The record gives the reactivity of an RNA of 207 nucleotides to 2A3. The data come from the RNA Mapping Database (RMDB), library OK3TST. For 2A3, 1,006 sequencing reads were counted.
RNA sequence: GGGAACGACUCGAGUAGAGUCGAAAACUUGGGAGGCUGAGGUGGGAGGAUUGCUUGGGCCUAGGAGUUCAAGGCUGUAGUGAGCUAUGACCAUGCCACUGCACUCUAACCUGAGUGACAGAGUGAGAUCCUGUCACUAAAAAAGAAAAAUAAAAGACUAUGGUGCUAUAUUCGUAUAGCACCAUAGAAAAGAAACAACAACAACAAC
Reactivity to 2A3 in 0.01 (KOAc 150mM, MgCl2 10mM, bicine 150mM(pH8.5), 24C), signal-to-noise 2, nucleotides 027 to 156: c010u030u040g000g000g000a050g020g000c050u050g050a010g000g020u140g050g010g020a000g050g000a050u070u140g010c010u040u020g000g000g040c000c030u070a210g020g060a100g010u050u080c070a070a000g060g000c030u020g000u000a000g000u000g060a140g000c010u030a040u180g090a130c050c030a030u200g000c010c000a000c010u000g010c020a020c000u060c040u070a050a110c000c030u040g040a010g000u000g000a000c000a000g020a010g020u010g020a060g000a010u000c000c010u010g000u010c040a000c020u060a040a100a000a010a030a030g120a050a080a030a000a000u220a030a140a010a030g060a020